[RMDB]
RNA sequence: GGGAACGACUCGAGUAGAGUCGAAAAUUAGCAGGGAUAACUUUACCAUUUCCAAAACCUUCAAAUCCCAUAGCUGAGAAUGUAGCAAUGGUAUUAGCUUCAGUAAUUGUUACUUCAGCUGUUGUUUUGUAAGUCCAUGAAAGUGUACGCCAACCAAAUAUCCUGUACUUUUCGAAGUACAGGAUAUAAAAGAAACAACAACAACAAC
Reactivity to 2A3 in 0.01 (KOAc 150mM, MgCl2 10mM, bicine 150mM(pH8.5), 24C), signal-to-noise 3, nucleotides 027 to 156: u140u050a020g030c050a030g030g010g000a010u040a110a110c040u100u110u040a170c070c060a150u010u070u130c050c020a070a070a040a120c030c010u110u120c050a070a090a150u040c000c000c000a060u070a000g000c000u000g000a000g040a150a150u220g010u000a000g000c010a000a010u030g060g030u130a170u150u190a060g040c030u180u130c070a050g020u180a090a000u020u000g010u000u010a000c000u000u000c010a000g000c030u000g030u000u010g000u000u040u000u000g030u020a080a110g000u040c100c020a080u090g180a110a110a030g080u100g030u060a030c020g070c080c050a090a060c030c030a080a220
Reactivity to DMS in 0.01 (KOAc 150mM, MgCl2 10mM, bicine 150mM(pH8.5), 24C), signal-to-noise 3, nucleotides 027 to 156: u000u010a050g010c070a120g040g050g040a150u010a070a070c050u000u010u010a080c060c030a100u000u010u000c040c040a090a110a110a130c010c020u010u000c050a080a160a150u010c000c010c020a100u000a060g030c010u000g000a130g010a100a060u010g030u010a060g020c040a020a020u000g010g020u000a120u000u000a110g030c080u010u000c090a130g020u000a130a050u010u010g010u010u000a020c030u010u000c020a050g030c000u000g010u020u000g000u000u010u000u000g000u000a070a110g020u000c030c020a010u000g000a080a030a090g010u000g000u000a070c050g000c080c040a070a140c060c040a000a090
An RNA of 207 nucleotides, treated with 2A3 and DMS and read out base by base. The reactions ran in a buffer of 150 mM KOAc, 10 mM MgCl2 and 150 mM bicine (pH 8.5), at 24 C. The data come from the RNA Mapping Database (RMDB), library OK3TST.